[RMDB]
RNA sequence: GGGAACGACUCGAGUAGAGUCGAAAAGGCGCAAUCUGUGAAUCUUUAACUGGUUAUAGGGUUGAAUACGCAGAGGACGAAUAUCCCACUUCGCAUCAGUUUUGCAUAGUGAUUCCACCUGAUACAGGUUCUUAGACCCAUUCGUGGGUCUAAGAACAAAAGAAACAACAACAACAAC
Reactivity to 2A3 in 0.01 (KOAc 150mM, MgCl2 10mM, bicine 150mM(pH8.5), 24C), signal-to-noise 4, nucleotides 027 to 126: g050g000c000g000c020a000a110u020c010u020g020u020g070a090a070u030c050u020u080u070a040a020c010u040g080g090u260u150a160u180a290g170g010g000u040u020g020a010a010u070a080c010g000c010a000g000a030g050g000a010c020g020a040a010u070a050u060c030c010c020a010c020u070u090c090g010c050a060u000c010a040g060u000u070u130u050g020c050a050u080a100g060u090g060a060u040u000c010c020a030c000c010u040g010a010u060a170c010a030g010
Reactivity to DMS in 0.01 (KOAc 150mM, MgCl2 10mM, bicine 150mM(pH8.5), 24C), signal-to-noise 2, nucleotides 027 to 126: g000g020c010g070c130a070a070u020c030u000g000u010g030a060a100u010c070u000u000u000a030a150c060u020g010g000u050u050a100u050a210g030g000g020u000u000g020a070a030u040a150c050g000c000a010g000a000g010g050a180c010g000a070a020u000a090u000c020c000c000a070c150u020u020c030g040c010a050u000c060a050g010u030u020u040u000g010c040a090u000a090g000u000g010a070u000u000c030c030a050c040c020u000g000a180u030a030c120a070g010

Conditions: 150 mM KOAc, 10 mM MgCl2 and 150 mM bicine (pH 8.5), 24 C. An RNA of 177 nucleotides, treated with 2A3 and DMS and read out base by base. The DMS profile rests on 2,780 reads. For 2A3, 2,609 sequencing reads were counted.